[RMDB]
RNA sequence: GGGAACGACUCGAGUAGAGUCGAAAACUAGUGCCAUUCGUGGCACUAGAAGGGGUCCAGCCUGGAAAGGCUGGAGGUUUUGGAAUGGUCGGGCCGCCAUUCAAGGUACGCUAUUCGUAGCGUACAAAGCAAUGUGGAUGUUCGCAUCCACAUUGCUAAAAGAAACAACAACAACAAC
Reactivity to DMS in 0.01 (KOAc 150mM, MgCl2 10mM, bicine 150mM(pH8.5), 24C), signal-to-noise 1, nucleotides 027 to 126: c000u000a020g010u010g010c010c000a030u000u010c280g020u010g000g020c010a000c000u000a000g000a090a120g000g000g000g030u000c000c000a000g020c000c010u000g010g010a080a160a020g000g000c000u000g020g000a010g010g010u010u020u010u020g010g010a020a020u000g010g010u010c020g000g000g000c020c010g010c000c000a000u000u000c010a200a080g010g010u000a010c010g020c020u000a030u000u020c130g030u000a020g000c000g030u000a000c010a040a050
Reactivity to 2A3 in 0.01 (KOAc 150mM, MgCl2 10mM, bicine 150mM(pH8.5), 24C), signal-to-noise 1, nucleotides 027 to 126: c020u000a010g010u000g030c010c010a030u020u050c220g060u060g010g000c000a000c000u000a000g010a030a010g020g010g020g010u000c000c000a000g000c000c010u040g080g130a260a120a000g000g000c020u000g000g030a010g030g000u040u090u140u220g120g020a000a010u000g000g000u020c010g010g000g000c010c000g000c000c000a010u000u020c000a010a010g150g000u020a000c000g010c020u010a010u050u130c190g090u060a000g000c000g000u000a000c000a000a050

Chemical mapping of a 177-nucleotide RNA with DMS and 2A3. The RNA was probed in 150 mM KOAc, 10 mM MgCl2 and 150 mM bicine (pH 8.5) at 24 C. Reactivities are given for positions 27 through 126.